[RMDB]
The data come from the RNA Mapping Database (RMDB), library M2PK50.
This 177-nucleotide RNA was probed chemically with DMS and 2A3.
The RNA was probed in 150 mM KOAc, 10 mM MgCl2 and 150 mM bicine (pH 8.5) at 24 C.
The DMS profile rests on 22,779 reads.
RNA sequence: GGGAACGACUCGAGUAGAGUCGAAAACCACCGCAAUUCGUUGCGGUGGGAAGGUGCAAUUCGCUGUCUGCACCACAGACGGCCAAUCCGUCAAAGCGUAAACUGGAGGGUCAUUCGUGACCCUCAAUAAUGGUAAAAAUUUCGAUUUUUACCAUUAAAAAGAAACAACAACAACAAC
Reactivity to DMS in 0.01 (KOAc 150mM, MgCl2 10mM, bicine 150mM(pH8.5), 24C), signal-to-noise 9, nucleotides 027 to 126: c000c000a000c000c000g010c000a010a020u000u010c200g020u000u000g010c000g010g020u010g000g000g000a040a030g000g010u000g010c010a040a140u010u010c050g020c020u010g010u000c070u000g000c010a040c030c020a080c100a140g000a020c010g010g010c160c260a110a120u010c010c010g000u000c010a050a300a050g010c020g010u010a050a070a070c170u000g010g010a010g010g010g010u000c000a030u000u010c160g010u000g000a010c000c000c000u000c000a010a040
Reactivity to 2A3 in 0.01 (KOAc 150mM, MgCl2 10mM, bicine 150mM(pH8.5), 24C), signal-to-noise 2, nucleotides 027 to 126: c000c000a010c000c010g000c010a030a020u070u060c170g080u120u020g010c000g000g000u000g000g020g000a010a030g030g010u000g000c010a050a090u090u100c020g010c050u030g020u040c020u020g020c010a010c010c000a010c010a020g010a000c000g020g020c060c060a040a050u090c000c020g010u000c010a070a000a000g030c020g060u090a100a070a070c110u140g200g000a020g000g000g000u010c000a020u040u040c070g020u010g000a000c030c000c010u010c000a000a000